[RMDB]
RNA sequence: GGGAACGACUCGAGUAGAGUCGAAAAAUGAACCUUUCAUCAACUCCAUCCGUGGCCGGUGGCGAUACAUGUUCUCUUGAAAAAACCUUUCAUGUGUCUGUUUGUUAUGCGUUCGCUACGAUCGAGAGCUAUCCCUCAUAUUCGUAUGAGGGAUAGCAAAAGAAACAACAACAACAAC
Reactivity to DMS in 0.01 (KOAc 150mM, MgCl2 10mM, bicine 150mM(pH8.5), 24C), signal-to-noise 3, nucleotides 027 to 126: a100u010g010a070a170c090c040u010u010u010c060a100u000c110a110a130c090u020c020c020a070u000c070c060g010u000g000g010c040c070g010g020u000g000g020c050g000a070u000a030c040a030u000g010u010u000c030u000c010u000u000g000a000a050a060a080a090a040c090c050u000u010u000c030a030u020g010u000g000u000c030u000g000u020u000u000g000u010u000a070u020g000c070g030u010u000c070g000c060u000a060c060g000a080u010c110g000a110g000a170

Source: RMDB library OK2TST, as collected in RNAgym. The record gives the reactivity of an RNA of 177 nucleotides to DMS. High DMS reactivity at an A or C suggests that its Watson-Crick edge is free. Reactivities are rounded to 0.1 and cut off at 0 and 3. The reactions ran in a buffer of 150 mM KOAc, 10 mM MgCl2 and 150 mM bicine (pH 8.5), at 24 C. For DMS the reverse transcriptase was MarathonRT. Reactivities are given for positions 27 through 126.